[RMDB]
RNA sequence: GGGAACGACUCGAGUAGAGUCGAAAAGCAGUAUACUGCCACUUGUGUGAGAAUACUUUUAGUACAAGCGAGUACACGCUCUACACUGCUACUUGUGUGAGAAUACUUUUAGUACAAGCGAGUACACUACACAGGUCUAGUUCGCUAGACCUGUGUAAAAAGAAACAACAACAACAAC
Reactivity to DMS in 0.01 (KOAc 150mM, MgCl2 10mM, bicine 150mM(pH8.5), 24C), signal-to-noise 3, nucleotides 027 to 126: g040c020a000g010u020a070u020a050c000u000g000c000c100a080c090u000u000g060u000g000u000g000a060g000a040a030u050a050c030u030u000u030u000a100g010u000a000c000a050a300g010c070g010a300g010u000a030c120a150c270g000c040u000c060u030a060c000a020c030u010g000c150u070a040c250u020u010g050u010g030u020g000a040g000a080a100u020a070c160u030u000u000u040a030g060u010a010c040a040a300g000c010g000a300g000u000a030c020a100c260
Reactivity to 2A3 in 0.01 (KOAc 150mM, MgCl2 10mM, bicine 150mM(pH8.5), 24C), signal-to-noise 4, nucleotides 027 to 126: g010c040a020g040u100a060u090a230c020u010g020c010c030a120c060u090u050g030u040g020u030g110a050g050a060a090u160a130c020u090u020u040u150a060g000u000a000c000a000a050g000c010g010a000g000u010a000c030a000c050g040c000u030c010u060a020c010a010c030u100g130c060u070a110c090u120u080g000u000g000u000g040a000g030a040a050u140a140c070u120u150u080u160a020g000u000a010c010a020a000g020c000g000a000g000u000a010c000a000c020